[RMDB]
RNA sequence: GGGAACGACUCGAGUAGAGUCGAAAAGGUGCGUCGGAGUCGUUCACGGCCGGCAGUAAGAACGGACUUCUCGAGAGCGGCUAUCGACCGGUCGGAAUCUAGCAUCCAGUGGGGAAACGUCGAACACGAUGACUGCGCUGUUCGCAGCGCAGUCAUCAAAAGAAACAACAACAACAAC
Reactivity to 2A3 in 0.01 (KOAc 150mM, MgCl2 10mM, bicine 150mM(pH8.5), 24C), signal-to-noise 1, nucleotides 027 to 126: g070g000u060g030c000g100u040c000g030g010a000g000u000c000g020u000u060c030a030c000g020g000c050c050g040g000c000a170g050u200a090a130g160a110a000c060g030g070a020c050u040u040c070u130c050g180a120g000a000g000c000g030g000c050u080a220u090c030g030a080c000c000g000g000u030c000g040g010a040a030u040c000u160a030g000c000a120u090c030c000a000g040u070g060g100g000g040a020a000a000c010g010u100c030g040a160a000c030a120c040